RNA sequence: GGGAACGACUCGAGUAGAGUCGAAAAGAAUAAAAGGCGAUAGAGUGAAAACUCUAGAACUCUCUCGACGCCGAAGCUACGAAAAAGAGAGAAGCUCACGAUGAAAAUUGUGAGCGAAAGUAGCGAAGGGAACAUACAUGUUCGCAUGUAUGUUCCCAAAAGAAACAACAACAACAAC
Reactivity to DMS in 0.01 (KOAc 150mM, MgCl2 10mM, bicine 150mM(pH8.5), 24C), signal-to-noise 2, nucleotides 027 to 126: g000a170a110u010a080a100a130a100g000g000c000g000a220u020a020g010a010g010u000g030a150a120a070a000c010u000c030u000a080g000a090a120c110u040c010u000c000u000c120g000a160c050g000c000c010g000a120a240g020c010u000a030c030g010a030a000a140a070a120g000a030g000a050g000a280a230g000c010u000c000a000c020g000a000u000g010a090a050a140a010u000u010g020u000g000a000g010c060g000a040a060a050g000u000a020g020c000g000a160a120
Reactivity to 2A3 in 0.01 (KOAc 150mM, MgCl2 10mM, bicine 150mM(pH8.5), 24C), signal-to-noise 1, nucleotides 027 to 126: g020a050a000u150a080a090a020a010g020g010c030g040a040u030a030g000a030g000u010g160a110a030a000a000c000u000c000u010a040g010a040a030c040u060c000u000c000u050c100g150a120c030g000c010c000g000a010a000g000c000u000a000c030g090a010a010a110a000a000g040a010g000a000g020a020a010g000c000u000c010a000c000g000a000u050g020a050a110a000a000u020u000g000u020g020a000g000c000g000a020a030a010g000u000a010g000c020g030a150a030